RNA sequence: GGGAACGACUCGAGUAGAGUCGAAAAGUGCGAUGACGCCGGCCGCCUUGAGAUCCUUCAGGCGCAGAGCGAAAUCAGCCGGCGACGCGAAAUUAGGCGUCUCCCCCAGCAAAUAGGGAAAUUGGGCGUGAUUUUGGUACGUGAGCCUGGUGGUUAGUGUACGGAACAAUUUCGAUUGUUCCGUACAAAAAGAAACAACAACAACAAC
Reactivity to 2A3 in 0.01 (KOAc 150mM, MgCl2 10mM, bicine 150mM(pH8.5), 24C), signal-to-noise 2, nucleotides 027 to 156: g150u110g010c030g020a100u050g020a020c020g000c000c000g020g000c080c030g050c010c000u160u240g070a100g040a300u220c050c000u070u030c070a000g040g000c010g000c050a040g020a050g060c020g020a010a000a130u060c050a010g000c000c030g030g000c030g010a000c000g000c000g110a130a000a160u260u160a140g050g010c000g020u000c050u000c010c030c000c010c000a000g030c080a020a040a120u110a040g040g010g000a020a040a090u130u140g110g000g000c030g010u070g020a010u140u000u000u000g020g000u010a000c000g020u020g050a020g000c040c000u040g000g000u020g030g030u050u010a120g040
Reactivity to DMS in 0.01 (KOAc 150mM, MgCl2 10mM, bicine 150mM(pH8.5), 24C), signal-to-noise 1, nucleotides 027 to 156: g010u000g020c060g010a050u020g010a300c010g030c020c000g010g000c100c030g050c000c040u000u000g010a040g000a110u010c090c070u040u000c030a050g000g000c020g090c060a150g000a090g000c000g020a040a180a100u000c020a210g010c000c010g020g010c030g000a040c010g000c030g000a030a100a070u000u000a140g000g010c020g000u010c030u000c010c000c030c000c020a200g000c010a030a060a190u000a090g000g010g030a060a070a130u010u000g000g010g000c000g040u000g040a090u020u000u000u000g000g030u000a010c070g000u000g010a050g020c050c010u000g010g020u020g000g030u000u000a130g010
The record gives the reactivity of an RNA of 207 nucleotides to 2A3 and DMS. For DMS the reverse transcriptase was MarathonRT. For 2A3 the reverse transcriptase was SuperScript II with manganese.